[RMDB]
RNA sequence: GGGAACGACUCGAGUAGAGUCGAAAAGAUAUGGACUCGCUGUUAUAGCUUGGAUUUAUGGAGGAACCGUGGGUCGGAAACGACCCACUCAGUACUCCAUUGUCAGCUGAAUAAGCGAGUCCUAAGUCAAAGAAUAAUAACUUCGGUUAUUAUUCAACACCCAUUAUUAGUUCGCUAAUAAUGGGUGAAAAGAAACAACAACAACAAC
Reactivity to 2A3 in 0.01 (KOAc 150mM, MgCl2 10mM, bicine 150mM(pH8.5), 24C), signal-to-noise 4, nucleotides 027 to 156: g020a030u110a050u150g000g000a000c000u000c000g000c020u010g020u110u050a280u110a300g000c020u070u170g150g010a080u260u300u150a010u050g010g000a020g000g000a010a000c020c000g010u010g000g000g000u000c010g030g030a060a100a030c010g000a000c000c000c000a000c000u000c000a000g010u000a000c000u010c000c000a000u000u000g000u000c000a000g000c000u020g000a060a070u220a290a000g000c000g000a000g000u000c000c000u000a000a000g000u000c040a090a020a100g000a000a000u000a000a000u000a000a000c010u040u080c190g030g010u020u000a000u000u000a000u000u000c000a010a010
Reactivity to DMS in 0.01 (KOAc 150mM, MgCl2 10mM, bicine 150mM(pH8.5), 24C), signal-to-noise 1, nucleotides 027 to 156: g010a090u000a250u020g010g000a020c010u000c020g010c000u020g020u000u000a190u000a030g000c000u020u000g050g010a030u000u010u000a000u000g010g000a060g070g000a150a200c300c300g030u000g000g050g030u000c000g000g050a210a150a300c030g030a000c010c020c000a010c010u000c010a050g000u020a150c000u010c000c000a000u000u000g000u000c010a030g010c010u000g020a080a060u000a100a030g020c050g000a040g020u000c020c010u000a000a080g000u000c040a110a080a170g000a010a020u000a030a000u000a020a010c010u010u020c300g080g000u000u000a030u000u000a000u000u010c000a120a240